Chemical mapping of a 207-nucleotide RNA with DMS and 2A3. The reactions ran in a buffer of 150 mM KOAc, 10 mM MgCl2 and 150 mM bicine (pH 8.5), at 24 C. The DMS profile rests on 6,813 reads. The data come from the RNA Mapping Database (RMDB), library RNAMAK.

RNA sequence: GGGAACGACUCGAGUAGAGUCGAAAACAUCGUGUUCGCACGAUGAAAAAAUCCUAAGUCGACGUUGAAAGCUGAAGAGCAACAGCUUAUCGGAAACGAUAAGACAUGCUCGGCAGCUGGAGUCGAUAUGGAAAAAACACCCUCUUCGGAGGGUGAACAUUGCGAUAAACUUCGGUUUAUCGCAAUGAAAAGAAACAACAACAACAAC
Reactivity to DMS in 0.01 (KOAc 150mM, MgCl2 10mM, bicine 150mM(pH8.5), 24C), signal-to-noise 2, nucleotides 027 to 156: c020a010u010c000g070u000g030u010u000c300g070c040a010c010g010a020u020g000a000a020a080a130a090a080u010c000c000u010a100a270g000u000c000g000a020c000g020u000u020g010a160a110a090g000c020u000g000a070a030g000a030g020c000a030a060c160a140g020c010u010u000a010u000c010g020g010a170a150a230c010g000a010u030a000a010g010a030c030a300u000g000c000u000c010g000g000c000a020g000c000u000g000g000a130g010u000c010g000a010u000a120u000g000g000a000a040a040a080a100a060c000a020c010c000c000u000c000u010u010c280g030g020a030g000g020g010u000g020a000a050
Reactivity to 2A3 in 0.01 (KOAc 150mM, MgCl2 10mM, bicine 150mM(pH8.5), 24C), signal-to-noise 4, nucleotides 027 to 156: c000a000u000c000g000u000g050u080u090c230g070c130a000c010g010a010u020g010a000a040a000a000a000a020u050c030c010u060a170a030g020u000c000g000a000c010g100u220u080g020a040a010a000g000c000u000g000a030a010g010a010g000c000a010a080c040a120g040c000u000u000a000u000c000g020g050a110a050a090c020g000a010u000a000a000g020a070c020a040u070g010c000u010c000g000g040c000a000g000c000u000g000g000a010g000u000c000g000a000u010a020u060g010g030a020a070a030a090a020a010c000a000c050c010c000u020c010u020u020c210g110g000a000g000g000g000u000g000a000a000